An RNA of 177 nucleotides, treated with DMS and 2A3 and read out base by base.
[RMDB]
RNA sequence: GGGAACGACUCGAGUAGAGUCGAAAACCAACGUGGUUCGCCACGUUGGAAACAACAAAAACUGUCAGUUGAGACAGACACAAAAACUGUCAGUGUAGACAGAAAGGCGGUCCUUCGGGACCGCCAAGGUACUUAGGUAGUUCGCUACCUAAGUACCAAAAGAAACAACAACAACAAC
Reactivity to DMS in 0.01 (KOAc 150mM, MgCl2 10mM, bicine 150mM(pH8.5), 24C), signal-to-noise 2, nucleotides 027 to 126: c020c000a000a000c000g030u000g000g010u000u010c210g020c000c000a020c000g000u000u000g000g010a030a050a060c070a110a050c070a070a090a090a100a100c000u000g010u000c000a120g000u000u000g020a140g000a070c030a020g000a070c150a080c220a070a040a020a070a060c020u000g010u000c000a080g010u000g000u010a070g000a030c000a030g000a080a040a060g000g030c000g010g010u000c000c000u000u000c130g010g000g000a010c010c000g020c010c010a010a000
Reactivity to 2A3 in 0.01 (KOAc 150mM, MgCl2 10mM, bicine 150mM(pH8.5), 24C), signal-to-noise 3, nucleotides 027 to 126: c000c000a000a000c000g010u000g000g050u060u050c170g050c070c000a000c000g000u000u000g010g030a040a000a010c030a000a020c020a000a130a030a030a060c010u000g000u000c020a170g040u100u110g130a040g030a100c030a020g080a010c030a010c020a150a170a020a050a050c000u010g000u000c000a020g090u030g090u230a060g040a010c010a010g090a110a040a010g000g000c000g010g010u010c010c010u040u090c140g080g030g000a000c010c020g000c010c000a000a000

2A3 is a SHAPE reagent: it acylates the 2'-hydroxyl of flexible nucleotides of all four kinds. It was measured as part of the RMDB library M2PK50. The RNA was probed in 150 mM KOAc, 10 mM MgCl2 and 150 mM bicine (pH 8.5) at 24 C.